An RNA of 177 nucleotides, treated with DMS and 2A3 and read out base by base. The reactions ran in a buffer of 150 mM KOAc, 10 mM MgCl2 and 150 mM bicine (pH 8.5), at 24 C. For 2A3, 10,426 sequencing reads were counted. The DMS profile rests on 5,203 reads. Reactivities are rounded to 0.1 and cut off at 0 and 3.

RNA sequence: GGGAACGACUCGAGUAGAGUCGAAAAGAUAUGGAUGGAGUAGGGAGCUCUAACUCGGAAACGAGUUGAGAGCGAAGAACUACCCAUCCUAAGUCAAAACCCAAUAAAACUUCGGUUUUAUUGGGAACUCCUUAAUUAACUUCGGUUAAUUAAGGAGAAAAGAAACAACAACAACAAC
Reactivity to DMS in 0.01 (KOAc 150mM, MgCl2 10mM, bicine 150mM(pH8.5), 24C), signal-to-noise 3, nucleotides 027 to 126: g000a000u000a020u010g000g000a020u000g000g000a160g010u000a010g010g000g010a070g030c000u010c000u000a020a010c000u000c010g020g000a000a000a020c010g010a020g010u000u010g010a020g000a020g040c010g020a050a110g010a260a300c000u010a000c000c000c000a000u000c010c000u000a000a030g000u000c000a120a090a130a220c000c000c000a010a000u000a000a000a000a000c000u000u010c240g040g010u000u000u000u000a000u010u000g010g000g000a020a040
Reactivity to 2A3 in 0.01 (KOAc 150mM, MgCl2 10mM, bicine 150mM(pH8.5), 24C), signal-to-noise 2, nucleotides 027 to 126: g010a000u000a000u060g000g000a000u000g000g040a240g060u000a010g040g000g040a030g000c000u000c000u010a010a000c000u000c010g010g000a020a000a000c010g000a000g010u000u050g200a060g000a000g010c000g000a230a010g000a000a000c010u000a000c000c000c000a000u000c000c000u000a000a000g000u000c000a020a070a110a250c010c000c000a000a000u000a000a010a000a010c020u050u070c160g090g020u010u020u000u010a000u010u010g000g000g010a000a010